[RMDB]
The data come from the RNA Mapping Database (RMDB), library OK2TST. Structure probing data (2A3 and DMS) for a 177-nucleotide construct. Values cover nucleotides 27 to 126.
RNA sequence: GGGAACGACUCGAGUAGAGUCGAAAAACUAAUAGGUGAGGCGCUUAUGCGUUGUGACAAUCUAUCUGAAUUUUUACCACAACUGAAAAUGCAAAAGGUGAAGUCAUGAUGAAAUUGAAAUUUUGUGAAGUGGAGGAAUAUUCGUAUUCCUCCACUUAAAAGAAACAACAACAACAAC
Reactivity to 2A3 in 0.01 (KOAc 150mM, MgCl2 10mM, bicine 150mM(pH8.5), 24C), signal-to-noise 1, nucleotides 027 to 126: a000c050u080a030a050u040a070g010g040u050g040a060g080g000c010g000c060u210u110a080u220g010c000g030u020u030g030u040g080a020c030a020a040u010c030u070a020u010c010u020g090a100a090u000u010u010u080u100a030c040c020a050c030a130a030c010u120g020a090a030a040a080u120g000c060a050a020a070a040g000g020u050g020a030a030g040u040c020a020u100g060a020u000g010a010a050a060u060u080g070a030a100a120u160u180u090u100g160u070g060
Reactivity to DMS in 0.01 (KOAc 150mM, MgCl2 10mM, bicine 150mM(pH8.5), 24C), signal-to-noise 5, nucleotides 027 to 126: a100c040u010a080a070u000a070g010g020u000g020a130g000g010c050g020c030u010u010a090u010g020c030g010u010u000g010u000g000a120c090a070a070u000c040u000a060u010c100u000g000a070a020u000u010u000u010u000a120c040c030a070c150a050a060c220u010g000a060a040a060a080u010g010c050a030a030a080a160g000g000u010g000a070a060g000u000c030a030u000g000a050u010g000a040a040a060u010u010g010a050a060a140u000u000u000u000g010u000g010